[RMDB]
RNA sequence: GGGAACGACUCGAGUAGAGUCGAAAAUCAAAAAAAAUCCUCAUGUGACGGUUGGCACUUUAGUGUACAGAUCAACUUCACCUGAUUCAUCUUUCUUCGCGCAGAAAAAAUGUAGACCGAAAAAAAAGCACAGAGGAGGUUUCGACCUCCUCUGUGCAAAAGAAACAACAACAACAAC
Reactivity to 2A3 in 0.01 (KOAc 150mM, MgCl2 10mM, bicine 150mM(pH8.5), 24C), signal-to-noise 1, nucleotides 027 to 126: u060c010a010a000a000a000a010a010a010a010u010c000c030u000c000a060u080g030u000g000a070c180g000g000u000u070g090g000c000a000c000u090u300u090a170g080u110g020u080a210c090a090g020a070u010c000a000a000c000u050u030c000a010c000c020u090g000a140u100u050c000a010u010c000u030u060u160c000u060u000c050g030c010g020c160a020g190a090a130a000a030a000a000u020g000u070a050g020a140c100c050g130a030a000a000a000a000a120a000a100

Chemical mapping of a 177-nucleotide RNA with 2A3.
Conditions: 150 mM KOAc, 10 mM MgCl2 and 150 mM bicine (pH 8.5), 24 C.
For 2A3, 431 sequencing reads were counted.